[RMDB]
RNA sequence: GGGAACGACUCGAGUAGAGUCGAAAAAAGAAAUCAAAAAAGAUUUCUGAGACAUACACGCUUCACAAUGUGCGGCAAAGAAACAUUGUUUAUGCAAAGGCACUUCGCAAUGUGUGCUCAAACAUUGACUACCGUCCACCGUUCGCGGUGGACGGAACUAUGCGUUACUCUUCGGAGUAACGCAUAGAAAAGAAACAACAACAACAAC
Reactivity to 2A3 in 0.01 (KOAc 150mM, MgCl2 10mM, bicine 150mM(pH8.5), 24C), signal-to-noise 3, nucleotides 027 to 156: a000a010g030a030a020a010u060c090a170a100a100a130a040a030g010a010u020u010u020c020u020g020a040g020a060c060a020u260a040c070a010c070g010c000u000u000c020a000c000a010a010u000g000u000g000c000g010g070c060a070a110a100g050a020a110a000c010a000u010u010g070u020u060u100a070u070g020c040a070a090a090g130g000c000a010c020u070u090c110g030c100a070a100u070g010u010g030u000g020c040u110c170a070a100a020c010a020u030u060g050a100c050u120a100c030c010g010u040c010c000a000c020c010g030u040u070c250g010c020g090g000u000g010g010a000c020g000g000a000a000
Reactivity to DMS in 0.01 (KOAc 150mM, MgCl2 10mM, bicine 150mM(pH8.5), 24C), signal-to-noise 1, nucleotides 027 to 156: a160a020g000a010a010a000u000c000a010a070a100a210a200a240g000a050u010u000u000c000u000g020a170g010a140c100a120u030a090c050a050c040g000c010u000u000c060a060c000a060a000u010g020u010g010c030g030g020c010a100a050a030g060a010a030a000c010a020u000u000g020u020u000u010a010u000g000c000a110a180a130g000g010c010a030c040u000u000c060g070c070a190a100u000g040u010g040u010g010c000u000c030a100a190a020c020a040u000u000g020a180c090u000a100c030c000g050u000c010c010a070c000c000g050u030u000c300g030c010g010g060u020g010g000a010c040g000g000a010a010
An RNA of 207 nucleotides, treated with 2A3 and DMS and read out base by base.
For 2A3 the reverse transcriptase was SuperScript II with manganese.
For DMS, 2,740 sequencing reads were counted.
DMS adducts were read by reverse transcription with MarathonRT.
Values cover nucleotides 27 to 156.
The RNA was probed in 150 mM KOAc, 10 mM MgCl2 and 150 mM bicine (pH 8.5) at 24 C.
Source: RMDB library M2RFPK, as collected in RNAgym.